[RMDB]
RNA sequence: GGGAACGACUCGAGUAGAGUCGAAAACAUAGAUAUAGAACCUAAUCUGGAAAAUAAUCUAGUAAAACUUUCUAGUUAUCAUGUAGUAAGUGUCGAUUGUAACAAGGAACUGAUGCCUAUUAGGACAGAUACUACUAUUUGUCUAAGUAUAGAUCAAAUCUGUCAAUCUGUUCGCAGAUUGACAGAUAAAAGAAACAACAACAACAAC
Reactivity to DMS in 0.01 (KOAc 150mM, MgCl2 10mM, bicine 150mM(pH8.5), 24C), signal-to-noise 1, nucleotides 027 to 156: c080a140u010a210g000a150u000a150u000a130g010a050a290c020c040u000a100a150u000c040u020g000g000a080a070a180a100u000a020a050u000c020u000a090g040u000a080a070a140a140c010u010u000u000c020u020a040g000u010u040a070u010c010a000u000g020u000a070g030u000a000a060g010u000g000u000c040g000a100u000u000g000u000a020a090c070a030a110g010g040a140a210c050u000g000a020u060g000c000c020u000a110u000u000a140g000g000a020c020a010g000a090u020a020c040u000a090c090u000a020u000u000u000g010u000c060u010a070a140g020u000a150u000a000g020a100u000c030a020a080
Reactivity to 2A3 in 0.01 (KOAc 150mM, MgCl2 10mM, bicine 150mM(pH8.5), 24C), signal-to-noise 1, nucleotides 027 to 156: c000a060u120a070g040a020u110a000u020a130g050a100a020c000c010u030a110a090u050c020u000g020g040a190a010a000a000u110a020a020u090c030u010a000g010u030a040a070a120a300c050u050u130u020c040u010a000g030u080u100a110u160c020a020u090g040u050a010g010u000a160a000g020u000g060u020c080g040a090u020u080g000u060a060a000c000a100a100g070g000a000a110c120u180g060a100u130g030c000c000u140a180u070u100a020g060g020a000c010a000g010a000u000a050c000u040a000c000u010a030u040u040u020g030u000c020u060a000a110g040u050a090u020a130g040a010u100c060a020a050
An RNA of 207 nucleotides, treated with DMS and 2A3 and read out base by base. The 2A3 profile rests on 438 reads. Source: RMDB library OK3TST, as collected in RNAgym.